[RMDB]
RNA sequence: GGGAACGACUCGAGUAGAGUCGAAAACUUUCUGCCUCUCAGGAAUGCAGAGAGAAUUCCUGGAGGAACAGCAGCUAUCAUACAUCCGUGAUGAAAGCCAUGGGACAAAGGCAAUUGAGCAAGAAGACAGGAGCUGGGGACAUUCUUGACAGUAGUAUAAUGGCAUUUUAUUCGUAAAAUGCCAUUAAAAAGAAACAACAACAACAAC
Reactivity to 2A3 in 0.01 (KOAc 150mM, MgCl2 10mM, bicine 150mM(pH8.5), 24C), signal-to-noise 6, nucleotides 027 to 156: c000u040u100u030c020u040g040c000c000u010c010u020c010a010g010g020a020a010u040g040c060a020g030a010g000a000g000a120a020u010u010c000c000u000g010g020a010g000g040a050a040c040a030g070c000a000g000c010u100a050u110c010a020u050a160c030a060u050c030c040g060u080g050a030u040g040a050a050a000g030c040c010a060u080g010g010g040a030c050a050a030a030g030g000c000a030a070u070u090g020a040g010c020a040a020g020a040a000g030a050c030a030g010g030a030g010c020u020g010g000g010g030a010c010a040u080u030c050u050u060g030a030c020a030g190u110a010g090u280a050
Reactivity to DMS in 0.01 (KOAc 150mM, MgCl2 10mM, bicine 150mM(pH8.5), 24C), signal-to-noise 3, nucleotides 027 to 156: c010u000u000u000c010u010g010c000c020u000c010u010c050a050g020g000a060a030u000g020c050a090g000a120g010a160g000a150a050u000u000c000c010u000g000g010a040g000g000a030a030c030a060g020c170a080g000c070u000a090u000c030a100u000a100c050a120u010c030c080g030u000g050a050u000g000a070a070a110g010c020c030a080u010g020g000g030a110c050a020a060a100g020g020c030a050a100u010u000g000a080g000c040a060a070g020a090a080g000a080c040a050g030g010a080g000c030u000g020g010g020g020a090c040a080u000u000c020u010u010g010a110c040a100g000u000a080g030u000a180
Conditions: 150 mM KOAc, 10 mM MgCl2 and 150 mM bicine (pH 8.5), 24 C. Structure probing data (2A3 and DMS) for a 207-nucleotide construct. Values are in units of 0.01, from 0 to 300, in steps of 10.